[RMDB]
Chemical mapping of a 207-nucleotide RNA with 2A3.
RNA sequence: GGGAACGACUCGAGUAGAGUCGAAAAAAAAGAGUAGAUGAGAAGGUUCUAGGCAUAGUGACAGGUGUUGAGGAUGUAAAGAGGACAGAGACGUCCUUCUCCCACCUAGGGGACUUUGCCUUUGCUAUGUCCUGUGUCUAGAGGAUUUCCUCCUCCAUACUAAAUCGGUCUUCGGACCGAUUUAGUAAAAAGAAACAACAACAACAAC
Reactivity to 2A3 in 0.01 (KOAc 150mM, MgCl2 10mM, bicine 150mM(pH8.5), 24C), signal-to-noise 1, nucleotides 027 to 156: a000a020a000a010g120a020g020u150a050g000a130u160g050a060g020a110a000g050g040u040u000c010u000a020g010g000c000a010u020a010g080u080g110a000c000a000g120g000u130g050u210u120g020a010g000g000a000u090g030u250a000a090a000g050a000g000g020a020c010a010g160a020g010a210c030g060u050c020c000u080u020c050u060c000c010c000a140c040c100u180a100g000g000g000g000a010c000u040u030u150g040c000c050u000u000u070g000c030u050a140u150g000u000c020c000u000g000u000g000u000c000u000a000g000a010g000g020a010u080u000u000c010c020u000c000c000u080c080c000a030
The RNA was probed in 150 mM KOAc, 10 mM MgCl2 and 150 mM bicine (pH 8.5) at 24 C. Values are in units of 0.01, from 0 to 300, in steps of 10. The 2A3 profile rests on 535 reads. Reactivities are given for positions 27 through 156.